[RMDB]
Conditions: 150 mM KOAc, 10 mM MgCl2 and 150 mM bicine (pH 8.5), 24 C. The record gives the reactivity of an RNA of 177 nucleotides to 2A3 and DMS. Source: RMDB library OK1LIB, as collected in RNAgym. Reactivities are given for positions 27 through 126.
RNA sequence: GGGAACGACUCGAGUAGAGUCGAAAAAAAUUACCAUGGACACCUGUUCAAGGUAGAACCAGUCCACCCGGACAAUAGCAAUUAGCUGCUGCUCGGGUGACGGCACACAUUCGAGCGGCGAAGCGGGGGUAGGCACAAUGUUCGCAUUGUGCCUACCAAAAGAAACAACAACAACAAC
Reactivity to 2A3 in 0.01 (KOAc 150mM, MgCl2 10mM, bicine 150mM(pH8.5), 24C), signal-to-noise 2, nucleotides 027 to 126: a000a000a000u130u030a040c070c010a010u040g000g000a040c110a170c180c210u170g030u020u030c000a070a030g010g020u020a020g030a070a080c040c020a040g020u000c000c000a020c010c000c000g000g020a010c060a060a130u100a100g040c070a010a240u300u060a080g000c020u070g000c000u000g000c000u000c030g000g000g000u000g000a010c010g060g030c010a030c020a020c000a020u010u040c000g010a010g030c000g040g050c010g150a040a000g000c040g000g010g080
Reactivity to DMS in 0.01 (KOAc 150mM, MgCl2 10mM, bicine 150mM(pH8.5), 24C), signal-to-noise 1, nucleotides 027 to 126: a000a040a170u060u000a000c000c000a090u000g040g000a020c030a160c210c150u000g000u040u000c000a000a010g000g040u070a020g000a090a090c130c130a150g000u010c020c000a110c000c070c010g000g000a100c020a000a160u020a070g040c080a060a090u010u030a130g000c000u000g000c040u020g030c000u000c000g090g010g040u000g000a000c180g020g020c140a030c050a140c010a020u000u000c020g000a060g030c010g000g050c000g000a080a010g000c030g040g000g090